[RMDB]
Source: RMDB library OK2TRN, as collected in RNAgym. This 177-nucleotide RNA was probed chemically with 2A3 and DMS. For DMS the reverse transcriptase was MarathonRT. The reactions ran in a buffer of 150 mM KOAc, 10 mM MgCl2 and 150 mM bicine (pH 8.5), at 24 C. The 2A3 profile rests on 1,686 reads. 2A3 adducts were read by reverse transcription with SuperScript II with manganese.

RNA sequence: GGGAACGACUCGAGUAGAGUCGAAAAGUCGGAUCGUGCCGGAGCGACUCAGCGCGAUCGUCGCCGGUAUCGCCGAUGGGUGCAUGCGUGCCGGCUGUGCGCUGCUUGGCGGCGAGACCGCAGAACAAUAAGUCCGUAGUUUCGACUACGGACUUAUAAAAGAAACAACAACAACAAC
Reactivity to 2A3 in 0.01 (KOAc 150mM, MgCl2 10mM, bicine 150mM(pH8.5), 24C), signal-to-noise 2, nucleotides 027 to 126: g040u010c030g030g030a200u050c020g000u060g090c010c000g090g000a070g040c000g080a050c060u020c120a020g000c010g000c000g050a060u050c060g040u040c010g010c020c000g000g030u020a040u070c020g000c000c040g020a050u050g060g040g060u100g130c060a060u290g050c090g010u020g000c000c060g020g040c050u070g020u060g000c040g000c020u040g010c000u090u190g010g000c010g010g000c010g010a020g010a030c000c000g000c010a020g080a080a050c030a080
Reactivity to DMS in 0.01 (KOAc 150mM, MgCl2 10mM, bicine 150mM(pH8.5), 24C), signal-to-noise 3, nucleotides 027 to 126: g030u010c020g020g000a250u000c040g010u010g030c020c030g020g000a130g000c060g010a060c110u010c140a120g010c020g010c020g010a120u010c050g000u010c090g000c020c010g000g000u000a010u000c010g020c000c090g010a080u030g010g020g040u010g010c070a080u010g010c050g020u010g000c000c030g010g000c070u000g010u020g020c000g010c030u000g000c060u000u010g030g000c020g010g000c000g000a070g010a200c220c010g010c060a100g010a090a060c200a100